[RMDB]
RNA sequence: GGGAACGACUCGAGUAGAGUCGAAAAUGAAUUCCAGAGGCUUAGGAAGCGCGUCCCUGCCCUGGGUCCAGGCCUUUCUCAGGAAGCCCUGUGCUCAGGAGGCCAUCGUUGAAGUCAGCUUGUAGGGAUCUGCUGAUGCGUUCGCGCAUCAGCAGAUAAAAGAAACAACAACAACAAC
Reactivity to DMS in 0.01 (KOAc 150mM, MgCl2 10mM, bicine 150mM(pH8.5), 24C), signal-to-noise 1, nucleotides 027 to 126: u010g030a130a170u000u010c010c000a150g010a190g010g030c040u000u000a050g010g030a160a070g000c110g000c120g020u000c070c010c020u020g000c080c000c050u000g010g000g010u000c240c010a020g000g010c210c040u000u000u000c000u060c300a130g000g000a030a000g020c300c000c000u000g010u000g000c020u000c000a000g000g000a090g010g000c050c040a040u000c080g000u030u030g000a090a050g010u050c030a130g020c040u000u000g030u000a070g000g000g000
This 177-nucleotide RNA was probed chemically with DMS. Conditions: 150 mM KOAc, 10 mM MgCl2 and 150 mM bicine (pH 8.5), 24 C. Values cover nucleotides 27 to 126. The DMS profile rests on 834 reads.